[RMDB]
RNA sequence: GGGAACGACUCGAGUAGAGUCGAAAACUUUGAUCUUCACGCCCGUGCGCUCCAGGCCGUCGGCCAGCUUCUCGGUGGAGUUCACCGAGUCGACCCCGUACGCGUACCGAGCCACCGCGGUGUAGUGCUCGGACUUCCGCAGCAUGUCCGCGGACAGAAUACAACACUUCUUCGGAAGUGUUGUAUUAAAAGAAACAACAACAACAAC
Reactivity to 2A3 in 0.01 (KOAc 150mM, MgCl2 10mM, bicine 150mM(pH8.5), 24C), signal-to-noise 4, nucleotides 027 to 156: c040u130u060u170g100a120u120c070u140u140c160a070c140g030c000c010c000g030u040g040c060g000c010u020c030c040a050g080g050c020c010g070u040c030g010g000c030c020a000g020c010u020u010c000u020c000g020g000u020g030g170a260g100u230u200c010a000c000c000g000a000g000u000c000g040a180c030c000c000c000g060u160a040c040g010c030g040u040a060c040c030g000a010g000c010c020a020c000c030g000c030g000g030u060g070u070a070g020u010g010c000u010c000g150g050a300c120u300u070c020c020g050c030a010g030c000a000u060g050u030c020c010g000c000g000g000a010c010a040g130
Reactivity to DMS in 0.01 (KOAc 150mM, MgCl2 10mM, bicine 150mM(pH8.5), 24C), signal-to-noise 2, nucleotides 027 to 156: c070u000u010u000g000a130u000c020u010u000c040a100c030g050c020c000c010g030u020g000c060g010c030u010c020c080a110g030g010c050c030g020u000c040g030g000c020c030a120g010c010u000u000c030u000c010g000g010u010g000g010a200g000u000u000c070a060c040c020g010a050g010u000c020g000a300c020c010c000c010g010u000a070c080g000c040g000u000a120c040c020g000a070g030c000c040a100c030c010g030c020g020g010u000g030u010a140g020u000g010c000u000c000g020g010a150c070u000u000c020c010g010c090a050g000c040a110u000g010u010c010c010g010c000g000g000a060c100a080g020
An RNA of 207 nucleotides, treated with 2A3 and DMS and read out base by base.
For DMS the reverse transcriptase was MarathonRT.
2A3 adducts were read by reverse transcription with SuperScript II with manganese.
The RNA was probed in 150 mM KOAc, 10 mM MgCl2 and 150 mM bicine (pH 8.5) at 24 C.